[RMDB]
This 177-nucleotide RNA was probed chemically with 2A3. As a SHAPE reagent, 2A3 marks flexible, mostly unpaired nucleotides at the ribose 2'-OH. The reactions ran in a buffer of 150 mM KOAc, 10 mM MgCl2 and 150 mM bicine (pH 8.5), at 24 C. The 2A3 profile rests on 519 reads. It was measured as part of the RMDB library RFM100.
RNA sequence: GGGAACGACUCGAGUAGAGUCGAAAAUUGAAUUGGAAAGCCAGAACUUUUUGCAAAAUAAUUUGAAAAGUUUGUUGAACCUUAAACCUUUCCUGAUGACUCCUUCCUUCUGAACUUAACUCGUUAAAUCUACGGGGCAAUUCGUUGCCCCGUAGAUAAAAGAAACAACAACAACAAC
Reactivity to 2A3 in 0.01 (KOAc 150mM, MgCl2 10mM, bicine 150mM(pH8.5), 24C), signal-to-noise 1, nucleotides 027 to 126: u200u090g020a000a030u030u060g000g010a140a060a000g020c000c000a010g000a080a040c000u000u000u000u000u240g000c050a000a080a070a070u130a230a300u160u080u120g050a030a020a000a000g000u010u000u030g040u030u000g030a050a090c000c000u040u100a000a000a160c000c000u000u100u090c000c010u000g080a060u040g120a090c000u140c000c000u000u000c000c000u000u020c030u000g040a080a030c000u060u040a070a030c000u030c040g060u220u100a060a210